[RMDB]
Record summary:
Chemical mapping of a 177-nucleotide RNA with DMS and 2A3. For 2A3 the reverse transcriptase was SuperScript II with manganese. The DMS profile rests on 1,161 reads. For DMS the reverse transcriptase was MarathonRT. The data come from the RNA Mapping Database (RMDB), library OK2TST. The 2A3 profile rests on 823 reads.
RNA sequence: GGGAACGACUCGAGUAGAGUCGAAAAUGAUACUGAUGUAGUAUGUGCACCCGCAAGGUAAAUCAACCCUCCGUCUGCGGAUGGAUUUCUUCUUGGCUAUUCUGUGCUGAACCUUGAUUGGCACCUGGUUUAACCGCUGAUUCGUCAGCGGUUAAACAAAAGAAACAACAACAACAAC
Reactivity to DMS in 0.01 (KOAc 150mM, MgCl2 10mM, bicine 150mM(pH8.5), 24C), signal-to-noise 2, nucleotides 027 to 126: u010g010a050u000a010c040u000g000a120u030g020u000a060g010u000a030u000g010u020g010c090a090c050c000c020g030c090a020a030g000g000u000a060a050a050u030c150a100a140c000c030c020u000c010c000g020u000c090u000g040c130g000g000a030u000g000g010a060u000u000u030c070u040u010c080u010u000g010g020c030u010a100u000u030c110u000g010u010g020c030u000g010a090a100c040c020u010u000g010a150u000u000g010g010c010a070c040c260u010g000
Reactivity to 2A3 in 0.01 (KOAc 150mM, MgCl2 10mM, bicine 150mM(pH8.5), 24C), signal-to-noise 1, nucleotides 027 to 126: u050g010a000u050a020c020u040g130a170u180g160u140a030g010u000a000u120g040u070g000c000a080c000c000c000g040c010a000a010g040g060u130a010a000a080u110c020a020a010c050c000c000u000c000c010g050u000c030u070g100c050g070g000a030u040g000g000a030u140u080u150c070u090u000c020u030u040g010g000c010u010a100u160u070c050u090g050u050g000c000u000g000a040a000c020c100u140u140g040a110u000u040g070g000c030a070c090c000u060g030